[RMDB]
The record gives the reactivity of an RNA of 207 nucleotides to 2A3. The reactions ran in a buffer of 150 mM KOAc, 10 mM MgCl2 and 150 mM bicine (pH 8.5), at 24 C.
RNA sequence: GGGAACGACUCGAGUAGAGUCGAAAACUGCACUUGUACGUGUACUACCGCCUGUAGAAGGUUCUAAUGAGUUCUUUAAGGAAUUUAGAACAUUAGGUAUUAACUAUGUUAAAAAAGAUGGAGCACAAAAGUUCUCUAUGCUUACUUUACCCGAGAAUCCUUACGUGAACUUCGGUUCACGUAAGGAAAAAGAAACAACAACAACAAC
Reactivity to 2A3 in 0.01 (KOAc 150mM, MgCl2 10mM, bicine 150mM(pH8.5), 24C), signal-to-noise 1, nucleotides 027 to 156: c040u020g000c000a010c030u090u130g090u300a100c160g000u000g020u020a020c020u070a050c000c030g040c020c030u000g010u110a100g020a270a000g090g000u020u010c060u060a000a000u130g060a020g140u000u000c040u010u190u130a110a050g140g010a110a110u010u170u030a010g000a070a000c000a010u000u130a030g060g000u110a110u110u080a100a000c020u070a090u190g060u150u200a120a000a000a090a000a000g030a020u040g030g010a020g000c200a000c020a130a190a250a000g000u050u000c000u040c030u030a060u130g060c000u070u010a000c020u090u080u140a130c000c010c010g080a060g080a250a100